[RMDB]
RNA sequence: GGGAACGACUCGAGUAGAGUCGAAAAGUGCCUGCUAUCACGGCAUUAUCGCCAGCGGUGCUGCCGUGAUGCGGUCUUCGCAAGGACCGCAACAUGAAGGUACGAUGCUUUUGUGUCGUGCUUCUUGACUCGACCAUAUGUUCGCAUAUGGUCGAGUAAAAGAAACAACAACAACAAC
Reactivity to 2A3 in 0.01 (KOAc 150mM, MgCl2 10mM, bicine 150mM(pH8.5), 24C), signal-to-noise 3, nucleotides 027 to 126: g180u150g090c000c000u040g030c080u070a010u030c000a000c010g000g010c010a000u020u040a020u000c030g040c080c050a070g210c040g020g030u020g000c000u010g000c010c000g000u000g000a010u010g020c000g010g000u010c010u130u060c100g110c250a120a090g040g010a000c000c000g040c000a030a010c020a070u170g070a160a000g020g010u010a000c010g000a000u020g000c030u090u230u210u300g020u020g010u000c010g000u000g000c000u030u040c000u020u020g020
Reactivity to DMS in 0.01 (KOAc 150mM, MgCl2 10mM, bicine 150mM(pH8.5), 24C), signal-to-noise 3, nucleotides 027 to 126: g010u020g030c010c050u000g010c090u020a040u000c020a010c010g000g000c000a010u000u040a000u000c020g010c180c190a160g010c020g010g010u000g020c100u010g010c050c000g000u000g000a020u020g030c020g030g000u000c000u000u020c300g010c270a180a090g000g000a020c010c000g050c000a160a120c180a030u010g010a040a020g010g000u000a000c000g000a020u010g020c020u010u020u010u020g040u000g000u010c000g020u000g000c020u000u000c020u010u000g000
The record gives the reactivity of an RNA of 177 nucleotides to 2A3 and DMS.
Source: RMDB libraries RFM100 and RFMREP, as collected in RNAgym.
For DMS the reverse transcriptase was MarathonRT.
The RNA was probed in 150 mM KOAc, 10 mM MgCl2 and 150 mM bicine (pH 8.5) at 24 C.